This 207-nucleotide RNA was probed chemically with 2A3. The 2A3 profile rests on 754 reads. Conditions: 150 mM KOAc, 10 mM MgCl2 and 150 mM bicine (pH 8.5), 24 C. The data come from the RNA Mapping Database (RMDB), library M2RFPK.
RNA sequence: GGGAACGACUCGAGUAGAGUCGAAAAAGUUAGGUUCGCUAUGGUGCAACUCUUUAAGGCAAUAACGAACUAAUUCUAAGCAAGGAAUGGAGAAAUGCCAGGGUCACUAUCUAGCCAUAAUAGUGCUGUAAGUGACUUAGAUUCGUCUAAGUCACAACCCACAGACUGGUUUCGACCAGUCUGUGGGAAAAGAAACAACAACAACAAC
Reactivity to 2A3 in 0.01 (KOAc 150mM, MgCl2 10mM, bicine 150mM(pH8.5), 24C), signal-to-noise 2, nucleotides 027 to 156: a000g210u140u060a050g000g110u020u060c010g000c030u050a030u060g130g070u110g000c010a030a110c020u050c040u090u120u100a040a100g010g000c050a040a030u140a150a000c100g010a020a000c020u020a010a000u120u010c010u110a050a050g030c010a000a050g040g000a010a010u020g010g010a030g020a050a080a020u080g020c060c080a060g010g010g000u080c020a010c020u000a010u050c040u030a030g000c000c010a020u000a070a040u030a040g060u100g020c050u030g050u140a110a070g000u010g010a000c000u000u000a000g000a000u000u050c110g010u010c170u000a010a000g000u020c000a010c000a020a050